[RMDB]
This 207-nucleotide RNA was probed chemically with 2A3.
For 2A3 the reverse transcriptase was SuperScript II with manganese.
RNA sequence: GGGAACGACUCGAGUAGAGUCGAAAAUAAAGAUCGUCGCGCCUCUGUUUCUCAACGUUUAGCAAUGAGCAGACGCGAUUGCUCAUGCACAAUCGACAUUCGUAUAUGUCGUGAAUGCUUGGGGCGUGAACGCCGCCGCUUCGGAUCUUGAUGCAGCCCUUAACCCGUACUUCGGUACGGGUUAAGGAAAAGAAACAACAACAACAAC
Reactivity to 2A3 in 0.01 (KOAc 150mM, MgCl2 10mM, bicine 150mM(pH8.5), 24C), signal-to-noise 2, nucleotides 027 to 156: u120a000a060a020g080a040u060c000g000u000c000g000c000g010c020c010u000c000u040g080u090u060u000c180u000c040a090a180c130g090u090u190u260a110g040c090a180a150u060g010a010g010c050a050g030a130c060g040c100g200a040u060u060g000c000u010c000a040u040g000c000a010c060a090a000u050c040g000a000c000a020u080u020c230g110u270a190u090a000u220g000u000c000g000u020g080a070a010u120g030c020u040u120g000g060g010g000c020g010u040g030a040a050c010g000c010c020g030c020c010g000c040u050u120c020g000g120a080u000c000u010u100g040a040u070g110c070a030g000c000
Source: RMDB library OK3TST, as collected in RNAgym.